An RNA of 177 nucleotides, treated with 2A3 and DMS and read out base by base. The DMS profile rests on 1,675 reads.

[RMDB]
RNA sequence: GGGAACGACUCGAGUAGAGUCGAAAAGAAUCGCAGUUCGCUGCGAUUCAAAUAAAAUCAGCGGUUAGGAGGCGUAAAAUAUUACCGCUGAACGCCUCCUUAAAACUACGUCCUUCGGGACGUAGAACAACAAAUAAGCCUUCGGGCUUAUUUGUUGAAAAGAAACAACAACAACAAC
Reactivity to 2A3 in 0.01 (KOAc 150mM, MgCl2 10mM, bicine 150mM(pH8.5), 24C), signal-to-noise 2, nucleotides 027 to 126: g010a000a000u000c000g000c000a020g010u030u090c140g030c100u000g000c000g000a000u000u000c000a020a000a000u060a010a000a000a030u050c030a020g050c000g060g050u160u120a020g000g000a020g010g010c010g030u040a040a090a240a110u280a080u130u180a070c000c020g040c010u000g030a010a010c010g010c000c000u000c010c000u010u080a040a110a020a020c000u000a000c000g000u000c020c000u020u110c190g050g000g000a000c010g000u000a000g000a000a010
Reactivity to DMS in 0.01 (KOAc 150mM, MgCl2 10mM, bicine 150mM(pH8.5), 24C), signal-to-noise 2, nucleotides 027 to 126: g000a010a000u000c010g040c010a020g010u000u030c230g030c000u000g010c010g010a010u000u000c000a030a050a070u000a030a060a080a090u010c060a070g030c020g010g030u010u000a040g050g000a010g000g000c020g000u000a050a040a060a090u010a060u030u010a150c030c010g000c040u020g010a050a020c030g000c000c000u000c000c000u010u000a010a030a090a170c020u000a000c000g000u000c000c000u000u000c150g020g000g010a020c000g000u010a000g000a050a090